[RMDB]
RNA sequence: GGGAACGACUCGAGUAGAGUCGAAAAUUAACAGCUGACUGGCAUAGUCCAUAGUUUCCUGAUACCUUUCUUAAGAUUUCCUUCCUGAGGAAACUGUGUCUCACAGAGGAGGAACGACGCCUCUGACCACAUCCUGCUGUUCUUGUGUGUGGUUGAGUAUCUUCCGUACAUUCGUGUACGGAAGAUAAAAAGAAACAACAACAACAAC
Reactivity to 2A3 in 0.01 (KOAc 150mM, MgCl2 10mM, bicine 150mM(pH8.5), 24C), signal-to-noise 3, nucleotides 027 to 156: u100u050a070a060c040a070g060c010u030g030a030c010u060g170g300c090a130u130a040g010u000c000c020a030u010a050g000u000u000u030c010c010u040g050a120u130a290c040c020u110u230u240c100u130u230a140a180g020a230u100u100u100c020c020u030u100c030c030u040g080a010g020g000a000a010a020c020u020g010u010g010u020c040u020c070a100c020a000g050a030g010g010a010g030g040a040a040c030g140a070c090g030c020c010u000c040u060g040a030c000c000a010c010a030u070c020c000u070g050c080u090g120u300u110c040u080u110g020u010g000u020g000u020g050g000u020u040g010a030g020
Reactivity to DMS in 0.01 (KOAc 150mM, MgCl2 10mM, bicine 150mM(pH8.5), 24C), signal-to-noise 2, nucleotides 027 to 156: u010u010a060a080c090a130g030c030u000g000a090c030u000g020g020c110a110u010a160g010u000c000c020a070u000a060g010u000u010u020c010c000u000g010a200u010a060c090c010u000u010u010c050u010u030a070a140g010a210u000u000u010c020c010u000u000c050c030u030g000a070g000g010a030a020a030c030u020g020u000g020u000c030u000c080a150c090a080g010a110g040g020a040g010g010a120a090c160g020a130c040g000c020c020u000c030u000g010a050c020c000a000c000a050u020c060c050u010g020c050u000g040u010u000c050u000u000g000u020g010u000g030u000g020g000u000u020g020a130g010